[RMDB]
RNA sequence: GGGAACGACUCGAGUAGAGUCGAAAAUUGCAAGCCUUCGGGCUUGCAAGGUGUCGGAAUGCGGAAUAAAUAAUCCUCCGCUUAAGGAUUAUACCGACUUAAGUGCCAGGCUGUUCGCAGCCUGGAACCACUCCAUCCGUUUCGACGGAUGGAGUGGAAAAGAAACAACAACAACAAC
Reactivity to DMS in 0.01 (KOAc 150mM, MgCl2 10mM, bicine 150mM(pH8.5), 24C), signal-to-noise 2, nucleotides 027 to 126: u000u000g000c000a000a010g020c000c000u000u020c200g050g000g030c000u000u000g010c010a000a000g000g020u000g010u000c010g000g000a150a140u010g010c030g050g000a130a100u010a060a150a080u000a050a030u010c060c030u010c120c090g010c160u000u020a070a060g010g010a080u000u000a030u000a170c030c000g000a030c050u000u000a040a090g010u000g000c010c010a020g010g000c000u000g020u020u020c180g020c020a020g000c000c000u000g000g000a050a050
Reactivity to 2A3 in 0.01 (KOAc 150mM, MgCl2 10mM, bicine 150mM(pH8.5), 24C), signal-to-noise 1, nucleotides 027 to 126: u040u020g010c010a000a000g000c000c020u080u090c300g120g030g000c000u000u000g020c000a000a000g030g000u080g000u000c020g020g020a150a060u120g040c000g040g020a040a070u090a140a160a060u170a050a080u090c010c000u000c000c060g100c050u020u050a030a020g000g020a040u080u000a020u110a080c000c010g020a050c060u050u140a160a030g070u090g130c000c000a020g000g030c010u040g020u040u130c260g030c070a000g000c000c000u000g000g020a000a020
The record gives the reactivity of an RNA of 177 nucleotides to DMS and 2A3. In probing experiments dimethyl sulfate is read out at A N1 and C N3, which are open when not base-paired. For DMS, 1,339 sequencing reads were counted. The reactions ran in a buffer of 150 mM KOAc, 10 mM MgCl2 and 150 mM bicine (pH 8.5), at 24 C. Source: RMDB library M2PK50, as collected in RNAgym.